Structure probing data (DMS and 2A3) for a 177-nucleotide construct.
Values are in units of 0.01, from 0 to 300, in steps of 10.
For 2A3, 2,679 sequencing reads were counted.

RNA sequence: GGGAACGACUCGAGUAGAGUCGAAAAGGCUUCUUGACAAUAGACUAGCUGUUUGCCACCGUGGCCAGUUUUGAAAGAAAAUAGAGAGUCAUUAUGUCAUCUGGUGCAAGAUAACAAGGGCAAAUGCGAAUAACCGCUAAUUCGUUAGCGGUUAUUCAAAAGAAACAACAACAACAAC
Reactivity to DMS in 0.01 (KOAc 150mM, MgCl2 10mM, bicine 150mM(pH8.5), 24C), signal-to-noise 5, nucleotides 027 to 126: g010g010c020u000u000c030u010u000g000a060c090a050a120u000a110g000a080c050u010a050g010c020u010g000u000u010u000g000c030c020a090c140c180g010u010g010g020c020c050a080g010u000u000u000u000g010a070a090a110g000a090a030a040a070u010a060g010a080g000a080g000u000c020a070u000u000a100u010g010u000c040a030u000c030u010g010g000u000g000c080a080a060g000a070u010a050a050c070a070a070g000g010g010c090a050a080a070u010g010c250
Reactivity to 2A3 in 0.01 (KOAc 150mM, MgCl2 10mM, bicine 150mM(pH8.5), 24C), signal-to-noise 2, nucleotides 027 to 126: g010g000c020u070u020c030u090u070g050a050c050a090a200u050a120g050a060c050u040a010g010c010u020g050u090u100u100g030c010c010a060c050c100g120u100g010g000c010c020a030g030u030u110u160u190g120a080a100a030g120a020a110a030a010u120a050g080a000g020a010g040u010c010a050u060u170a070u120g060u020c020a040u020c040u050g000g060u080g040c010a040a020g030a080u100a100a030c030a060a050g040g000g020c010a060a040a060u100g020c070